The data come from the RNA Mapping Database (RMDB), library TTRINS. An RNA of 177 nucleotides, treated with DMS and read out base by base. For DMS the reverse transcriptase was MarathonRT. The DMS profile rests on 662 reads. Reactivities are given for positions 27 through 126. The RNA was probed in 150 mM KOAc, 10 mM MgCl2 and 150 mM bicine (pH 8.5) at 24 C.

RNA sequence: GGGAACGACUCGAGUAGAGUCGAAAAGAUAUGGACAGAACCUCCUUGGACCAUCUCAGUAACUACCCACCAGCUUCGGAAACGAAGCUGAGGUUACUGAGAUGCUAGGAGAUUCUGUCCUAAGUCACUGUUAGUCCAUGUUCGCAUGGACUAACAGAAAAGAAACAACAACAACAAC
Reactivity to DMS in 0.01 (KOAc 150mM, MgCl2 10mM, bicine 150mM(pH8.5), 24C), signal-to-noise 1, nucleotides 027 to 126: g000a030u000a300u000g000g000a010c000a020g000a010a000c050c000u010c010c040u040u000g010g010a170c300c050a040u020c000u000c040a010g050u000a000a020c060u030a040c140c100c110a300c130c000a020g010c010u000u000c000g040g000a120a070a200c000g020a060a000g000c000u000g000a020g040g010u000u000a010c000u000g000a000g000a000u000g010c020u010a020g010g050a020g000a010u010u000c020u000g000u000c010c000u000a000a070g050u000c050a300